[RMDB]
Chemical mapping of a 207-nucleotide RNA with 2A3. The 2A3 profile rests on 1,111 reads. 2A3 adducts were read by reverse transcription with SuperScript II with manganese. The reactions ran in a buffer of 150 mM KOAc, 10 mM MgCl2 and 150 mM bicine (pH 8.5), at 24 C. It was measured as part of the RMDB library M2RFPK.
RNA sequence: GGGAACGACUCGAGUAGAGUCGAAAACCAGCUUGCCUGUGUCCUAGGGAAUUGGAAGGUCAUCCUUCACAGGAUCGUGUGGAAGUCCUGAUCGGGGCGGAAGCAUUAAAACCAUUCGAGCUAGUCAAAAACCGGCUGAUCUUCGGAUCAGCCGGAAGUCAGAAAUAAACUUCGGUUUAUUUCUGACAAAAGAAACAACAACAACAAC
Reactivity to 2A3 in 0.01 (KOAc 150mM, MgCl2 10mM, bicine 150mM(pH8.5), 24C), signal-to-noise 2, nucleotides 027 to 156: c010c000a000g020c030u030u020g000c000c010u040g000u020g020u150c030c030u040a050g000g030g070a150a180u190u030g030g020a090a050g030g030u110c020a010u070c020c020u060u110c030a020c030a020g020g000a030u020c020g000u020g000u030g040g000a020a010g000u000c000c010u140g030a200u170c090g010g010g010g020c010g010g000a000a000g020c000a000u000u200a040a100a010a030c010c000a030u030u130c030g010a020g010c030u090a030g110u160c040a000a040a040a120a120c000c010g000g010c000u000g010a000u000c000u030u050c130g040g000a000u000c000a000g050c140c000g000g000a000a000